RNA sequence: GGGAACGACUCGAGUAGAGUCGAAAAUUAUUGAUCUCGUAACCAUUGACACCGAGGAUCAAGAGAAAGCCAACGAUGAUAUAGCUCGGAUUGACUUCCUUCACCAUCGGUUUCUGGACUCUUGCAGAUUUCUGUUUAACUUCGGUUAAACAGAAAUAAAAGAAACAACAACAACAAC
Reactivity to DMS in 0.01 (KOAc 150mM, MgCl2 10mM, bicine 150mM(pH8.5), 24C), signal-to-noise 4, nucleotides 027 to 126: u010u000a130u010u010g010a060u000c010u000c060g000u000a130a140c100c050a100u010u000g000a070c110a090c080c000g010a040g010g000a040u000c080a040a050g000a090g010a050a060a060g010c030c030a020a120c070g010a080u000g010a140u000a120u020a170g020c100u000c050g000g000a120u000u000g000a050c040u000u000c000c010u010u000c150a080c040c010a040u000c030g000g010u010u000u000c030u010g010g000a160c110u000c040u000u000g020c200a090g000
Reactivity to 2A3 in 0.01 (KOAc 150mM, MgCl2 10mM, bicine 150mM(pH8.5), 24C), signal-to-noise 3, nucleotides 027 to 126: u220u080a050u080u100g040a050u030c010u000c040g030u050a050a070c020c030a120u040u190g040a030c010a020c040c030g020a010g080g030a090u040c020a010a000g050a000g020a050a090a000g020c020c010a000a020c030g030a040u080g030a060u070a040u060a290g050c010u010c030g050g030a070u020u020g030a040c030u030u020c000c000u030u040c030a040c010c010a100u010c010g020g000u030u060u030c030u020g050g030a060c040u020c030u040u110g010c030a020g040
The record gives the reactivity of an RNA of 177 nucleotides to DMS and 2A3. 2A3 adducts were read by reverse transcription with SuperScript II with manganese. For DMS, 3,449 sequencing reads were counted.